Chemical mapping of a 177-nucleotide RNA with 2A3 and DMS.
The DMS profile rests on 3,048 reads.
Source: RMDB library TTRDEL, as collected in RNAgym.
[RMDB]
RNA sequence: GGGAACGACUCGAGUAGAGUCGAAAAGAUAUGGAAGUAACCUGCUAAGCGUUUGACGUCGGAAACGACCGAGCUUAGAACUACAGGUUUACUUCCUAAGUCAAACUGGGCCGUUCGCGGCCCAGAAGACAAAUGUUACGUUCGCGUAACAUUUGUCAAAAGAAACAACAACAACAAC
Reactivity to 2A3 in 0.01 (KOAc 150mM, MgCl2 10mM, bicine 150mM(pH8.5), 24C), signal-to-noise 2, nucleotides 027 to 126: g010a010u090a030u120g000g000a020a000g010u010a010a000c000c000u020g000c020u040a020a000g000c040g120u110u300u300g130a100c050g010u010c010g000g050a090a050a090c010g010a010c030c010g020a010g000c010u020u000a010g020a040a030c040u200a020c020a000g000g000u090u100u040a000c000u000u000c000c020u000a050a010g020u000c020a000a050a130c020u010g000g020g000c040c000g060u110u120c300g020c030g160g020c000c000c010a000g000a010a010
Reactivity to DMS in 0.01 (KOAc 150mM, MgCl2 10mM, bicine 150mM(pH8.5), 24C), signal-to-noise 3, nucleotides 027 to 126: g010a030u000a300u010g000g010a030a000g020u000a010a020c000c010u000g000c020u000a020a010g010c000g020u010u010u010g000a120c300g000u010c010g020g000a100a120a170c010g010a000c000c010g000a100g010c000u000u000a010g000a030a040c070u010a300c010a000g000g000u000u010u000a000c010u000u000c000c000u000a010a060g000u000c040a070a090a210c010u000g020g010g050c000c000g030u000u000c170g020c010g000g020c000c000c000a000g000a030a090